[RMDB]
RNA sequence: GGGAACGACUCGAGUAGAGUCGAAAAAACAACUGGAAGAACAAUUAGAUGCAGCGUUUGCUUAUCAAGGACCAGUUUUAAUUGAGGUUCGUAUUUCCCCUACUGAAGCUGUAACCCCAAUGGUUCCACUACGGAAUGAUUUCGAUCAUUCCGUAGUAAAAGAAACAACAACAACAAC
Reactivity to DMS in 0.01 (KOAc 150mM, MgCl2 10mM, bicine 150mM(pH8.5), 24C), signal-to-noise 6, nucleotides 027 to 126: a090a040c120a050a040c040u000g010g010a160a100g010a100a070c080a090a090u010u010a090g010a060u010g010c100a020g020c060g010u000u010u010g010c050u010u010a080u000c080a070a070g000g000a120c020c010a050g010u000u000u010u010a030a120u000u000g010a080g000g010u000u000c070g000u000a080u010u010u000c010c010c010c160u010a090c080u010g000a050a060g010c040u000g010u010a050a080c040c000c000c020a050a050u010g010g010u000u000c010c050
Reactivity to 2A3 in 0.01 (KOAc 150mM, MgCl2 10mM, bicine 150mM(pH8.5), 24C), signal-to-noise 4, nucleotides 027 to 126: a000a010c080a040a000c030u070g060g020a090a040g060a170a060c030a080a100u180u150a140g020a080u070g020c050a020g010c050g080u130u300u280g010c050u090u090a070u120c020a050a050g020g020a050c000c010a040g000u020u010u050u150a120a100u060u070g060a030g030g030u050u070c020g010u050a100u040u070u060c010c000c030c010u030a050c010u060g060a050a010g010c040u030g050u090a030a050c000c010c000c050a010a040u050g060g000u040u020c020c000